[RMDB]
RNA sequence: GGGAACGACUCGAGUAGAGUCGAAAAGUACACCCUCCCUCCCUCCCAAAAGCGCGCAAAUAAUGGGAGGGACUCAGGGAUGAGUAGGCCAAAAGGCCAUAUCCCGAAGACGCGCGACGGGACAAAAUGUGUAGGAAAGAUUCGUCUUUCCUACACAAAAAGAAACAACAACAACAAC
Reactivity to DMS in 0.01 (KOAc 150mM, MgCl2 10mM, bicine 150mM(pH8.5), 24C), signal-to-noise 4, nucleotides 027 to 126: g010u000a130c210a150c010c000c030u010c000c000c000u020c020c020c000u000c000c000c000a050a060a100a190g000c020g010c010g030c080a090a100a150u030a070a210u000g000g000g000a020g000g020g010a000c030u000c200a040g010g010g000a060u000g010a050g010u000a110g030g010c000c010a050a070a140a120g000g000c020c000a120u000a050u000c000c000c000g000a150a130g000a080c070g010c030g010c000g010a130c090g000g000g000a060c160a050a050a100a110
Reactivity to 2A3 in 0.01 (KOAc 150mM, MgCl2 10mM, bicine 150mM(pH8.5), 24C), signal-to-noise 2, nucleotides 027 to 126: g040u070a040c030a100c080c000c010u020c000c010c000u010c000c000c000u000c030c000c000a070a070a000a000g040c020g000c000g010c020a080a090a050u150a090a090u200g010g000g000a010g010g000g000a000c000u000c030a000g000g050g020a010u080g000a010g070u300a140g010g000c030c020a080a300a130a220g000g000c010c010a020u070a060u070c000c000c000g000a050a020g070a040c020g000c000g000c010g030a010c010g000g000g020a030c040a000a180a020a070
The record gives the reactivity of an RNA of 177 nucleotides to DMS and 2A3. It was measured as part of the RMDB library M2PK90. The reactions ran in a buffer of 150 mM KOAc, 10 mM MgCl2 and 150 mM bicine (pH 8.5), at 24 C. For 2A3, 3,007 sequencing reads were counted.